Record summary:
The record gives the reactivity of an RNA of 207 nucleotides to 2A3 and DMS. Reactivities are given for positions 27 through 156. The data come from the RNA Mapping Database (RMDB), library OK3TST. Conditions: 150 mM KOAc, 10 mM MgCl2 and 150 mM bicine (pH 8.5), 24 C. 2A3 adducts were read by reverse transcription with SuperScript II with manganese. For 2A3, 1,331 sequencing reads were counted.
[RMDB]
RNA sequence: GGGAACGACUCGAGUAGAGUCGAAAAUGAUAACAGCUAAGGCAUUGGGGUUGGCUACGUGCCAGGCAAGGAGUUGGCACUUUACAUGCUUUAUCUCAUUUCAGCCACAUAACAUCGACAGGUGGCAUUAUGAUUCAUAUCAUCCCCAUCUGAUAGCGUUCAUAAACUGCUUCGGCAGUUUAUGAACAAAAGAAACAACAACAACAAC
Reactivity to 2A3 in 0.01 (KOAc 150mM, MgCl2 10mM, bicine 150mM(pH8.5), 24C), signal-to-noise 3, nucleotides 027 to 156: u140g030a020u050a180a110c080a030g060c040u080a080a090g060g010c040a080u020u150g070g000g010g000u090u060g010g050c010u080a030c080g000u000g000c010c000a000g080g110c030a020a090g140g030a140g050u030u020g010g010c000a000c000u060u100u040a140c100a070u110g040c000u090u140u120a080u010c020u010c030a090u000u070u130c100a020g010c020c010a010c020a050u110a080a040c020a050u040c080g080a040c040a030g040g050u010g000g000c040a020u000u020a020u040g080a050u070u060c060a050u090a020u220c020a010u000c000c000c000c030a030u030c000u000g030a100u080a040g080c060
Reactivity to DMS in 0.01 (KOAc 150mM, MgCl2 10mM, bicine 150mM(pH8.5), 24C), signal-to-noise 1, nucleotides 027 to 156: u000g020a150u000a040a120c010a080g000c110u000a040a100g070g000c030a150u000u000g000g020g030g080u000u000g020g000c000u040a090c120g000u000g000c010c020a300g040g050c020a100a110g040g010a200g010u020u010g010g010c000a090c020u010u000u010a080c200a060u000g010c010u000u000u000a070u010c100u000c010a130u000u010u000c080a150g010c000c050a020c070a100u000a040a120c130a160u000c020g010a130c000a060g050g000u000g000g000c040a100u000u000a090u020g040a050u000u020c070a080u040a110u000c010a080u000c100c050c010c010a010u000c060u000g010a130u000a080g000c190